An RNA of 207 nucleotides, treated with 2A3 and read out base by base. Conditions: 150 mM KOAc, 10 mM MgCl2 and 150 mM bicine (pH 8.5), 24 C. Reactivities are rounded to 0.1 and cut off at 0 and 3. The 2A3 profile rests on 690 reads. 2A3 adducts were read by reverse transcription with SuperScript II with manganese.
[RMDB]
RNA sequence: GGGAACGACUCGAGUAGAGUCGAAAAACCCACCGCUACGGCGGUGGCAAGUAGAAAAGUUGGUGCUUAGACCACGCCCUCUACCGUAAUAAUAGAUAAAUAGGCGAGUAUCAGUACGCUGAUACAAAAAACACUCACACGUUCGCGUGUGAGUGAACAGGAGAGGUAUCUUCGGAUACCUCUCCUGAAAAGAAACAACAACAACAAC
Reactivity to 2A3 in 0.01 (KOAc 150mM, MgCl2 10mM, bicine 150mM(pH8.5), 24C), signal-to-noise 2, nucleotides 027 to 156: a000c000c010c010a020c000c030g000c030u030a040c180g160g020c020g000g050u000g000g000c030a080a060g000u000a010g010a050a000a010a000g030u050u040g010g000u090g040c120u170u180a090g010a110c000c020a000c010g000c000c010c010u000c000u030a040c020c010g040u030a050a110u110a230a020u030a180g090a050u120a090a130a070u080a040g000g000c060g000a000g000u000a000u000c010a020g010u030a020c290g010c130u000g020a030u050a020c020a000a180a000a000a010a000c010a000c000u000c000a000c010a000c020g020u080u070c130g000c000g090u020g000u010g010a020g000u000g000a040a000